About this RNA: This 177-nucleotide RNA was probed chemically with DMS.
[RMDB]
RNA sequence: GGGAACGACUCGAGUAGAGUCGAAAAGAUAUGGAUGUAUAACGUAACAAGGAUGUUCGAUAAGAAGACAUCGGAAACGAUGUUCUUCUUUUGACGAACUCCUUGUUACGUUAUACAUCCUAAGUCAGAUAUGUGAUUUGUUCGCAAAUCACAUAUCAAAAGAAACAACAACAACAAC
Reactivity to DMS in 0.01 (KOAc 150mM, MgCl2 10mM, bicine 150mM(pH8.5), 24C), signal-to-noise 5, nucleotides 027 to 126: g000a060u000a300u010g000g020a010u000g010u010a000u000a000a000c000g030u000a000a000c000a000a010g010g010a030u010g020u010u000c000g010a200u000a020a020g010a020a010g000a030c010a010u010c000g000g000a150a080a200c000g000a010u000g010u010u010c000u000u000c000u000u000u000u000g020a220c170g000a010a010c000u010c000c000u000u000g000u000u000a000c000g010u000u000a000u000a000c000a000u000c000c000u000a010a060g000u000c050a160

Values cover nucleotides 27 to 126.
The data come from the RNA Mapping Database (RMDB), library TTRINS.